[RMDB]
The data come from the RNA Mapping Database (RMDB), library OK1LIB. The record gives the reactivity of an RNA of 177 nucleotides to DMS and 2A3. DMS adducts were read by reverse transcription with MarathonRT. The reactions ran in a buffer of 150 mM KOAc, 10 mM MgCl2 and 150 mM bicine (pH 8.5), at 24 C. For 2A3, 1,215 sequencing reads were counted.
RNA sequence: GGGAACGACUCGAGUAGAGUCGAAAACUCGGCUGCCAGCAUCAUCUUGACGAACGGCAUCUCGUCGGAGACCCCGAGCGCGCCGUGCAGGUGCAUGGCCCGCUGCACGACGUCAUGCAGCACCUGGAUUCCUUAGCGCCUUCGGGCGCUAAGGAAUAAAAGAAACAACAACAACAAC
Reactivity to DMS in 0.01 (KOAc 150mM, MgCl2 10mM, bicine 150mM(pH8.5), 24C), signal-to-noise 1, nucleotides 027 to 126: c000u000c010g000g000c010u000g080c040c040a090g070c160a060u010c110a150u020c060u000u020g010a060c000g000a120a240c000g000g000c010a190u060c080u000c000g050u000c040g000g000a020g020a060c110c020c000c000g000a060g070c030g000c300g010c010c000g020u000g000c000a190g000g000u070g000c030a060u000g000g030c000c050c060g000c000u040g000c100a100c020g000a140c070g040u020c060a030u000g000c010a020g050c030a070c110c050u050g000g000
Reactivity to 2A3 in 0.01 (KOAc 150mM, MgCl2 10mM, bicine 150mM(pH8.5), 24C), signal-to-noise 2, nucleotides 027 to 126: c030u010c010g000g000c040u030g050c000c030a010g030c030a080u060c000a010u000c090u060u150g050a050c030g030a100a030c020g060g000c050a040u070c050u000c090g100u040c010g060g030a080g040a130c010c020c010c000g000a020g010c000g000c000g000c030c020g050u040g000c030a080g100g200u230g110c000a010u010g060g000c100c000c000g000c010u030g000c040a070c030g070a000c020g020u050c030a030u070g050c010a010g010c020a040c020c000u020g050g030